[RMDB]
This 177-nucleotide RNA was probed chemically with 2A3. It was measured as part of the RMDB library RFM100. The 2A3 profile rests on 465 reads. The reactions ran in a buffer of 150 mM KOAc, 10 mM MgCl2 and 150 mM bicine (pH 8.5), at 24 C.

RNA sequence: GGGAACGACUCGAGUAGAGUCGAAAAAGCCUAUGGUACGCCAUAGGCAGGGGGACUCGGCGGAAAAUAUGGUGGUAUACUACACAGUGAAUAGAUAUACCCGUAUAUUUUUCUGCCGAGCCCCUAAUACUCGUUUCUACUUCGGUAGAAACGAGUAAAAAGAAACAACAACAACAAC
Reactivity to 2A3 in 0.01 (KOAc 150mM, MgCl2 10mM, bicine 150mM(pH8.5), 24C), signal-to-noise 1, nucleotides 027 to 126: a000g010c000c000u000a000u000g000g000u040a060c250g130c020c000a000u010a000g000g060c010a010g000g000g000g000g180a280c000u020c000g000g000c000g000g020a000a000a000a000u040a000u010g120g000u180g090g000u000a000u000a000c010u010a000c110a010c050a230g160u110g230a300a030u050a030g130a050u000a000u000a000c010c000c000g200u040a000u000a000u000u060u000u010u000c010u000g000c010c000g000a000g000c000c000c000c000u000a000a000